Chemical mapping of a 207-nucleotide RNA with DMS and 2A3. Conditions: 150 mM KOAc, 10 mM MgCl2 and 150 mM bicine (pH 8.5), 24 C. Reactivities are given for positions 27 through 156.
RNA sequence: GGGAACGACUCGAGUAGAGUCGAAAAUCCUGUCAUGAGGCCGAAACGAAGGCACGUACCCCUUCGAAUGGCGUCGGGGAGUCAGCGGCUAUAUAUGCGCCUAAUGCUGGCAUCCGGGAACGAGCGUAUUAGACAGUAAUCUUCGGAUUACUGUCAACCUAUGUAGUGAGUUCGCUCACUACAUAGGAAAAGAAACAACAACAACAAC
Reactivity to DMS in 0.01 (KOAc 150mM, MgCl2 10mM, bicine 150mM(pH8.5), 24C), signal-to-noise 3, nucleotides 027 to 156: u000c020c010u010g030u000c090a110u010g030a120g020g020c000c010g000a080a130a230c020g020a040a060g030g010c070a120c100g020u010a140c080c030c010c010u000u000c020g020a120a150u010g020g030c040g010u000c020g000g010g010g010a180g030u000c030a050g060c020g030g000c040u010a110u000a110u000a080u010g020c090g000c040c040u000a100a090u000g010c000u020g000g010c020a090u000c030c000g010g030g000a100a060c070g000a110g020c040g020u010a100u000u000a160g000a040c010a000g000u000a010a000u000c000u000u010c300g070g000a050u000u000a000c000u000g010u000c000a000a050
Reactivity to 2A3 in 0.01 (KOAc 150mM, MgCl2 10mM, bicine 150mM(pH8.5), 24C), signal-to-noise 5, nucleotides 027 to 156: u020c020c030u050g090u100c100a120u110g090a040g090g000c000c020g080a100a050a030c000g010a020a010g000g060c050a020c040g190u210a140c000c010c000c020u010u010c020g070a110a080u190g010g020c030g040u030c010g000g050g000g020a110g020u010c010a020g010c010g090g000c050u010a020u040a010u020a030u300g140c060g020c030c010u120a180a050u230g010c000u000g000g000c010a140u010c010c020g030g020g010a050a040c030g020a030g080c040g010u100a080u080u110a140g010a010c000a000g000u000a000a000u000c010u030u090c210g090g000a010u000u000a000c000u010g010u000c000a000a000